[RMDB]
Structure probing data (2A3 and DMS) for a 177-nucleotide construct. The 2A3 profile rests on 24,548 reads. 2A3 adducts were read by reverse transcription with SuperScript II with manganese. It was measured as part of the RMDB library OK2TST.
RNA sequence: GGGAACGACUCGAGUAGAGUCGAAAAACACUGGGAUUUUACUCACUUACAGUUUCAGGCUGAGAAAAUGUCCAAAUCAAGGCAUCAUGAAGGCAAUGCUUUCUUCCUGAGGACCUGCUGCCGGUGAAUAUACUUAGCUUUUCGAAGCUAAGUAUAUAAAAGAAACAACAACAACAAC
Reactivity to 2A3 in 0.01 (KOAc 150mM, MgCl2 10mM, bicine 150mM(pH8.5), 24C), signal-to-noise 9, nucleotides 027 to 126: a000c040a010c040u040g040g000g060a060u030u070u060u170a130c020u030c020a030c020u060u120a060c040a110g050u020u050u150c050a030g040g000c050u040g020a010g040a070a060a030a030u090g050u010c020c020a050a040a080u130c060a080a040g010g000c010a020u030c020a030u150g040a020a010g030g010c050a110a180u170g020c000u040u060u010c000u040u020c000c010u020g030a080g040g050a140c000c010u060g020c020u040g020c020c010g010g000u020g010a020
Reactivity to DMS in 0.01 (KOAc 150mM, MgCl2 10mM, bicine 150mM(pH8.5), 24C), signal-to-noise 9, nucleotides 027 to 126: a080c060a070c080u010g000g010g010a090u000u000u000u010a090c050u000c020a050c070u010u000a090c130a090g010u000u000u000c080a060g000g010c150u010g000a100g000a050a030a040a040u010g010u010c020c030a050a080a090u010c130a060a080g010g000c110a040u000c070a070u010g010a060a040g010g010c060a090a080u010g010c070u000u000u000c030u000u000c020c020u000g000a100g000g000a080c050c060u000g010c080u000g010c030c020g010g010u000g000a110

Background:
Values cover nucleotides 27 to 126. Values are in units of 0.01, from 0 to 300, in steps of 10.